RNA sequence: GGGAACGACUCGAGUAGAGUCGAAAACACGACAACGACGAGCAGCAGCGAUCGCCAGUGAGUCGAGAGGAACAACCGGAGGGCGGCGAUCAUUCUCCGGCUACCUUACCGCCAGCAGCGCGGAAAUAUUUCAGGAAGUCGUCGAUCGUCUCCGUCCAAACUAGUGUAAGUUCGCUUACACUAGUUUAAAAGAAACAACAACAACAAC
Reactivity to DMS in 0.01 (KOAc 150mM, MgCl2 10mM, bicine 150mM(pH8.5), 24C), signal-to-noise 4, nucleotides 027 to 156: c060a140c040g010a070c030a100a080c030g020a030c020g010a100g010c020a150g040c100a110g000c060g000a060u000c020g030c020c010a160g020u000g010a130g020u000c010g000a140g010a130g010g010a080a090c060a080a060c040c030g000g000a100g010g010g030c060g030g010c040g020a040u000c030a170u010u000c030u010c120c020g020g020c000u000a060c020c020u000u010a120c020c010g000c020c020a190g010c100a080g010c050g040c010g000g010a020a070a070u000a120u000u000u010c100a110g030g000a130a100g000u000c020g000u010c040g010a080u000c030g010u000c010u020c020c000g010u010c100c070
Reactivity to 2A3 in 0.01 (KOAc 150mM, MgCl2 10mM, bicine 150mM(pH8.5), 24C), signal-to-noise 8, nucleotides 027 to 156: c090a010c030g090a020c030a100a020c040g070a010c010g010a010g020c030a010g010c010a010g050c050g140a110u110c040g010c050c020a090g030u050g080a020g020u050c030g010a020g000a040g080g050a100a070c050a050a060c080c040g020g010a020g000g030g020c010g010g000c000g000a000u010c010a040u200u050c060u040c040c000g000g000c010u070a100c000c000u020u060a040c000c000g020c040c000a130g130c080a050g000c150g010c050g090g090a020a100a010u300a090u060u180u160c050a000g000g010a020a000g010u010c020g020u040c080g020a010u010c000g030u010c010u000c010c010g160u000c010c020
Structure probing data (DMS and 2A3) for a 207-nucleotide construct. DMS adducts were read by reverse transcription with MarathonRT. For DMS, 11,655 sequencing reads were counted. For 2A3 the reverse transcriptase was SuperScript II with manganese.